[RMDB]
The record gives the reactivity of an RNA of 207 nucleotides to 2A3. Conditions: 150 mM KOAc, 10 mM MgCl2 and 150 mM bicine (pH 8.5), 24 C. Values cover nucleotides 27 to 156.
RNA sequence: GGGAACGACUCGAGUAGAGUCGAAAAGGAUUGGUAUGUAAGCUACUUCUUCCAGUAGCUGCGUCAUAACAUCAAGGUUAUGCAUACUGAGCCGAAGCUCAGCUUCGGUCCUCCAAGGAAGACCAAAUACAGCUCAGCCCGUUCGCGGGCUGAGCAACUUCACCCCUAUCUUCGGAUAGGGGUGAAGAAAAGAAACAACAACAACAAC
Reactivity to 2A3 in 0.01 (KOAc 150mM, MgCl2 10mM, bicine 150mM(pH8.5), 24C), signal-to-noise 1, nucleotides 027 to 156: g090g030a100u000u070g010g000u010a000u000g000u000a010a010g000c000u000a020c000u120u080c000u000u000c020c010a000g000u000a000g000c000u000g000c000g000u020c000a020u000a000a000c010a060u270c150a150a100g300g010u000u000a000u010g000c000a000u000a000c000u000g000a000g000c000c000g010a000a000g000c080u090c300a030g010c020u020u000c000g020g000u010c000c020u000c000c070a030a080g010g000a000a000g000a000c000c060a030a070a030u140a130c100a020g020c000u000c000a000g000c000c020c010g040u090u090c150g040c030g130g000g040c000u000g000a000g000c000a000a000